[RMDB]
RNA sequence: GGGAACGACUCGAGUAGAGUCGAAAAAUGGCAGGUUUGGGAACCGCUGCCUUUCAGGAAAGGUGCUGACGUGGGCCACUGCCGCUUCGCUGGGAAGCAAUGGGCCCAGCUAGGCCCGGGGCGCGGCCUUCAUAAGGAGCUUCGGCUCCUUAUGAAGAAAAGAAACAACAACAACAAC
Reactivity to DMS in 0.01 (KOAc 150mM, MgCl2 10mM, bicine 150mM(pH8.5), 24C), signal-to-noise 3, nucleotides 027 to 126: a080u000g020g010c010a020g010g010u000u000u010g010g010g000a090a100c050c040g010c040u010g010c010c010u010u000u010c130a140g010g010a050a070a080g020g010u000g020c040u010g010a110c220g000u000g020g010g010c000c010a070c070u000g000c130c130g000c040u000u000c060g010c190u000g010g010g010a060a020g010c020a100a090u010g000g000g010c000c000c010a020g000c040u000a140g000g010c020c030c020g010g010g010g030c070g020c040g000g000c100
Reactivity to 2A3 in 0.01 (KOAc 150mM, MgCl2 10mM, bicine 150mM(pH8.5), 24C), signal-to-noise 2, nucleotides 027 to 126: a000u070g040g000c050a040g080g010u110u080u110g040g010g040a040a060c010c050g030c050u080g000c020c000u020u070u070c120a110g020g200a170a110a010g060g000u200g100c030u060g010a050c080g050u100g000g060g000c000c030a300c100u020g020c050c030g010c010u010u020c010g060c140u190g000g120g150a000a000g030c040a020a100u080g060g010g000c000c000c000a000g000c040u010a010g010g040c110c000c000g020g000g000g000c030g000c010g000g030c020
The data come from the RNA Mapping Database (RMDB), library OK2TRN. Structure probing data (DMS and 2A3) for a 177-nucleotide construct. The RNA was probed in 150 mM KOAc, 10 mM MgCl2 and 150 mM bicine (pH 8.5) at 24 C. DMS (dimethyl sulfate) methylates the pairing face of unpaired adenines and cytosines. For 2A3, 1,350 sequencing reads were counted. For DMS the reverse transcriptase was MarathonRT. Values cover nucleotides 27 to 126.